[RMDB]
RNA sequence: GGGAACGACUCGAGUAGAGUCGAAAACCGUAGGUAACAAGUGACACUAUGGAUCUGAUCUGGGGCUGGAUACCUCUAUCUUGGUGAUCCAGUUAAAAAACGUCUAGCGGGCCAAGCCCAGGGGGGACGAACCGAAAAAUUUCGAUUUUUCGGUUCGAAAAGAAACAACAACAACAAC
Reactivity to DMS in 0.01 (KOAc 150mM, MgCl2 10mM, bicine 150mM(pH8.5), 24C), signal-to-noise 3, nucleotides 027 to 126: c000c010g010u010a020g020g000u070a030a020c050a080a070g010u040g000a110c300a030c010u000a030u010g000g020a110u010c020u020g010a180u040c040u010g000g000g010g010c000u000g000g000a000u010a040c010c000u000c300u030a100u030c190u020u020g000g030u010g010a040u000c000c000a010g020u000u000a000a010a170a050a040a030c210g000u010c010u010a120g020c130g020g010g010c030c050a060a040g020c010c010c000a040g010g000g010g010g000g000a160
Reactivity to 2A3 in 0.01 (KOAc 150mM, MgCl2 10mM, bicine 150mM(pH8.5), 24C), signal-to-noise 4, nucleotides 027 to 126: c000c000g010u020a010g030g040u060a030a000c050a180a300g020u030g040a010c020a000c020u020a030u070g030g020a070u030c050u100g050a050u030c000u020g010g000g030g000c000u010g010g000a000u010a020c020c010u020c020u090a240u150c110u080u140g000g000u050g050a040u000c000c010a000g010u010u020a040a010a020a020a000a000c030g030u020c070u070a060g030c070g020g000g040c000c030a060a010g020c010c000c010a010g000g010g000g000g000g000a010